RNA sequence: GGGAACGACUCGAGUAGAGUCGAAAACGACGCAAUCAUCACAGACCCGCCCUACGGCAUCAACUAUGUCUCUCAGACGGGGGCGUCCAUCAAGAACGACAAGAGCCCCUUCAUCUGGUUCCUCUACGACGCCUUCCGCGUGCUCAAGUCCGGCGAGCACUGAUCAAGCAUUCGUGCUUGAUCAGUGAAAAGAAACAACAACAACAAC
Reactivity to 2A3 in 0.01 (KOAc 150mM, MgCl2 10mM, bicine 150mM(pH8.5), 24C), signal-to-noise 3, nucleotides 027 to 156: c040g090a020c070g020c080a050a090u120c030a040u080c040a050c030a110g090a070c040c000c030g010c010c000c010u080a040c040g020g030c010a030u070c040a040a060c060u120a080u140g010u010c000u000c010u030c090a040g040a080c000g000g000g030g000g000c000g040u020c040c020a090u130c040a070a130g050a140a070c060g110a050c080a120a100g050a040g050c000c000c000c000u050u060c020a110u000c030u020g040g000u050u030c010c000u000c030u050a030c080g040a010c010g020c010c000u220u120c020c020g020c020g030u050g010c010u020c030a030a050g030u030c040c010g020g010c020g030a020g010
Reactivity to DMS in 0.01 (KOAc 150mM, MgCl2 10mM, bicine 150mM(pH8.5), 24C), signal-to-noise 2, nucleotides 027 to 156: c040g000a070c030g020c050a080a130u000c040a080u010c040a140c060a220g000a070c010c000c030g000c020c000c020u000a060c090g000g050c020a060u000c040a080a120c090u000a080u000g020u000c020u000c030u000c060a060g020a040c030g000g020g030g010g010c030g020u000c020c070a140u000c090a120a100g000a060a080c050g030a120c040a080a140g000a120g010c010c020c040c040u010u010c020a130u000c050u000g010g020u000u000c020c010u030c060u000a110c070g020a040c010g000c020c010u000u020c000c010g030c040g050u010g000c010u000c030a070a090g000u020c010c010g020g000c080g030a090g000